Annotation
Source: RMDB library M2PK50, as collected in RNAgym. An RNA of 177 nucleotides, treated with DMS and 2A3 and read out base by base. The RNA was probed in 150 mM KOAc, 10 mM MgCl2 and 150 mM bicine (pH 8.5) at 24 C. 2A3 adducts were read by reverse transcription with SuperScript II with manganese. For DMS, 2,944 sequencing reads were counted. For DMS the reverse transcriptase was MarathonRT.
[RMDB]
RNA sequence: GGGAACGACUCGAGUAGAGUCGAAAAGCAAGGAGCUUCGGCUCCUUGCAAAUGAAAGCUCCAAAAGGAGCAAAGGACAUGCAAAGAAAAAGUCCAAAUGCAAAAGUCCGUUCUUCGGAACGGACAACCUUAUUAGUAUCUUCGGAUACUAAUAAGGAAAAGAAACAACAACAACAAC
Reactivity to DMS in 0.01 (KOAc 150mM, MgCl2 10mM, bicine 150mM(pH8.5), 24C), signal-to-noise 3, nucleotides 027 to 126: g010c010a010a010g010g010a000g040c010u000u020c200g050g010c000u000c000c000u000u000g000c000a010a040a080u000g000a100a130a120g030c000u000c000c000a040a050a120a100g000g010a010g010c000a000a060a080g010g040a030c020a070u010g010c130a080a120a120g030a080a050a060a110a060g000u000c020c030a080a070a060u030g000c140a050a070a130a090g000u000c000c000g000u000u000c000u000u010c150g040g000a020a000c010g000g000a020c000a000a010
Reactivity to 2A3 in 0.01 (KOAc 150mM, MgCl2 10mM, bicine 150mM(pH8.5), 24C), signal-to-noise 3, nucleotides 027 to 126: g010c000a010a010g020g000a020g000c020u080u140c250g080g000c000u000c010c000u000u020g010c000a000a000a000u010g010a000a010a020g000c000u000c010c000a090a260a060a300g010g000a010g000c000a030a120a020g000g000a000c020a030u170g040c080a110a150a200g100a070a180a080a020a010g000u000c000c000a100a030a010u180g010c020a070a090a020a020g000u000c000c000g000u000u020c000u050u050c210g070g010a000a000c000g000g000a000c000a000a010